[RMDB]
RNA sequence: GGGAACGACUCGAGUAGAGUCGAAAAGAUAUGGAACAGCUACCCACCCGGGGAACGCUAGAACUACACGCACGUUUCGGAAACGAAACGCGCGUGCUAGCGUUCCCCGGAGGCUGUUCCUAAGUCAGUUAGUUAAAAAGUUCGCUUUUUAACUAACAAAAGAAACAACAACAACAAC
Reactivity to 2A3 in 0.01 (KOAc 150mM, MgCl2 10mM, bicine 150mM(pH8.5), 24C), signal-to-noise 1, nucleotides 027 to 126: g040a120u300a260u300g010g000a020a000c000a000g030c010u240a300c020c000c000a030c000c010c040g020g160g010g030a000a000c020g000c030u050a000g010a120a080c300u300a040c080a000c000g020c050a000c050g000u030u000u000c000g060g000a100a160a030c020g010a040a010a000c000g030c000g000c000g050u010g000c000u000a010g000c000g000u010u000c000c010c000c000g000g010a000g000g000c000u000g000u010u000c000c010u000a020a010g070u040c100a020
Reactivity to DMS in 0.01 (KOAc 150mM, MgCl2 10mM, bicine 150mM(pH8.5), 24C), signal-to-noise 2, nucleotides 027 to 126: g030a190u000a180u010g000g010a010a010c000a000g020c020u000a190c000c010c060a300c070c000c000g030g000g020g000a000a030c010g000c000u020a000g010a040a040c080u050a300c020a010c000g000c000a020c000g030u000u000u000c000g000g000a140a070a180c000g000a000a000a020c000g020c040g030c030g000u000g000c020u000a000g010c030g040u000u000c000c000c000c000g000g020a000g020g000c000u000g010u000u000c000c000u000a000a050g000u030c240a100